This 207-nucleotide RNA was probed chemically with 2A3.
[RMDB]
RNA sequence: GGGAACGACUCGAGUAGAGUCGAAAAGUUACUAUCUAGCGAAACGACAGUCAAGGGAACGGACUUGAAGGGCUAAGCGGGGAAAGAAGACCCUGUUGAGUUUGACUCCAGUCUGGCUCUGUGAGGCGAGCUUCACUUAUCGAAUGAAGAGACCAAUGCCGUUGAUAUAGUUCGCUAUAUCAACGGCAAAAGAAACAACAACAACAAC
Reactivity to 2A3 in 0.01 (KOAc 150mM, MgCl2 10mM, bicine 150mM(pH8.5), 24C), signal-to-noise 1, nucleotides 027 to 156: g040u070u100a040c030u010a070u200c030u140a030g060c040g100a140a030a080c070g070a050c030a000g000u050c030a020a070g000g050g000a020a110c000g000g000a000c000u020u060g060a030a040g020g070g030c010u030a070a000g000c010g020g000g110g000a120a100a080g220a030a100g060a140c030c000c000u040g050u020u080g010a040g000u000u070u170g040a010c000u000c000c000a010g000u000c050u020g050g020c010u020c000u060g070u000g020a020g020g010c000g020a010g050c020u050u020c010a000c000u070u120a110u160c020g040a040a020u120g020a080a040g040a000g000a000c050c030a000a020u060
The RNA was probed in 150 mM KOAc, 10 mM MgCl2 and 150 mM bicine (pH 8.5) at 24 C.
It was measured as part of the RMDB library PDB130.
For 2A3 the reverse transcriptase was SuperScript II with manganese.
Reactivities are given for positions 27 through 156.